Chemical mapping of a 177-nucleotide RNA with DMS.
Values cover nucleotides 27 to 126.
Source: RMDB library OK2TRN, as collected in RNAgym.
RNA sequence: GGGAACGACUCGAGUAGAGUCGAAAAUAAGGGUUCCUGGGUCAAGCUGAUCUGCCCAGGGUAAGUCGGGACCUAAGGCGAGGCCGACAGGCGUAGUCGAUGGAUAACCGGUUGAUAUUCCGGUACCUCCGGACUGUGGAUUCGUCCACAGUCCGGAAAAAGAAACAACAACAACAAC
Reactivity to DMS in 0.01 (KOAc 150mM, MgCl2 10mM, bicine 150mM(pH8.5), 24C), signal-to-noise 1, nucleotides 027 to 126: u030a090a130g000g030g030u000u000c000c000u000g000g000g000u000c130a120a150g100c160u000g020a040u060c000u000g000c020c000c010a020g000g010g020u030a010a090g000u000c000g000g000g000a180c060c000u010a100a200g020g070c060g000a110g010g000c000c020g030a120c300a090g010g000c020g000u000a300g020u000c000g000a220u040g000g000a080u010a080a190c010c010g040g000u000u000g000a100u010a220u000u010c000c000g020g000u000a060c040c040